[RMDB]
RNA sequence: GGGAACGACUCGAGUAGAGUCGAAAAAACAUUCCGAGGGGACCGUCCCUCGGUAAUGGCGAAUGGGACCCAGAACUCUCUCAGAAUCUAGGGAGAUCUCCCAGAUUCGAGAGAAAACUGGCUCUCCGAAUAGGCAGGUUCGCCUGCCUAAAAAGAAACAACAACAACAAC
Reactivity to 2A3 in 0.01 (KOAc 150mM, MgCl2 10mM, bicine 150mM(pH8.5), 24C), signal-to-noise 4, nucleotides 027 to 129: a010a000c000a000u020u000c000c000g010a000g040g050g000g010a170c080c000g300u300c010c000c000u000c010g000g000u020a000a000u000g000g010c050g040a050a090u150g020g000g020a010c000c000c000a000g000a010a020c010u000c000u000c020u010c020a090g010a010a010u030c010u190a240g000g020g010a070g040a090u090c150u000c130c010c000a000g000a000u000u000c000g000a000g010a000g000a020a000a000a010c000u000g000g000c000u020c000u000c010c020g000a060a040
Reactivity to DMS in 0.01 (KOAc 150mM, MgCl2 10mM, bicine 150mM(pH8.5), 24C), signal-to-noise 6, nucleotides 027 to 129: a040a020c070a060u020u020c010c000g010a040g000g000g000g000a200c170c270g030u080c010c030c000u040c000g000g010u020a000a000u030g010g030c090g040a070a080u010g000g010g030a050c100c010c010a000g030a090a180c110u040c000u000c020u020c010a140g050a000a000u000c010u030a150g000g020g000a020g000a160u000c130u000c000c000c050a020g020a020u020u020c010g000a020g010a040g030a020a020a050a210c020u020g010g020c130u010c030u060c030c000g000a110a090
Conditions: 150 mM KOAc, 10 mM MgCl2 and 150 mM bicine (pH 8.5), 24 C. Structure probing data (2A3 and DMS) for a 170-nucleotide construct. The DMS profile rests on 18,620 reads. DMS adducts were read by reverse transcription with MarathonRT.